[RMDB]
Structure probing data (2A3 and DMS) for a 177-nucleotide construct. The RNA was probed in 150 mM KOAc, 10 mM MgCl2 and 150 mM bicine (pH 8.5) at 24 C.
RNA sequence: GGGAACGACUCGAGUAGAGUCGAAAAGCUGUCAGCUUCGGCUGACAGCAAACGCUCAUCUCAUGGAGCGCAAGACGUAUAGCUACAUAUUCGACAUGAGAAAAAGCUGCGCGUUCGCGCGCAGCAAGUCUAUCUUAUCGUUCGCGAUAAGAUAGACAAAAGAAACAACAACAACAAC
Reactivity to 2A3 in 0.01 (KOAc 150mM, MgCl2 10mM, bicine 150mM(pH8.5), 24C), signal-to-noise 4, nucleotides 027 to 126: g000c000u000g000u000c000a000g010c020u030u090c170g110g000c000u000g000a000c000a000g010c010a010a000a000c010g000c000u000c010a090u000c020u010c010a010u010g000g010a010g010c020g000c080a090a040g130a030c040g050u090a060u060a150g100c080u170a070c080a180u160a140u080u180c060g060a040c030a000u000g000a000g000a050a020a000a010a020g000c000u000g010c020g010c010g010u030u050c250g000c010g000c000g000c070a000g000c000a000a000
Reactivity to DMS in 0.01 (KOAc 150mM, MgCl2 10mM, bicine 150mM(pH8.5), 24C), signal-to-noise 4, nucleotides 027 to 126: g010c000u000g020u000c010a010g010c000u000u000c220g010g000c010u000g010a010c000a000g020c000a010a060a150c030g010c000u000c000a140u000c010u000c000a010u000g000g000a010g000c000g000c110a060a070g010a100c110g000u000a050u000a060g020c170u000a100c130a120u000a050u010u010c060g000a150c010a020u010g000a000g010a020a170a070a140a140g010c000u000g010c000g020c010g020u000u010c200g030c020g010c000g010c000a000g010c010a010a010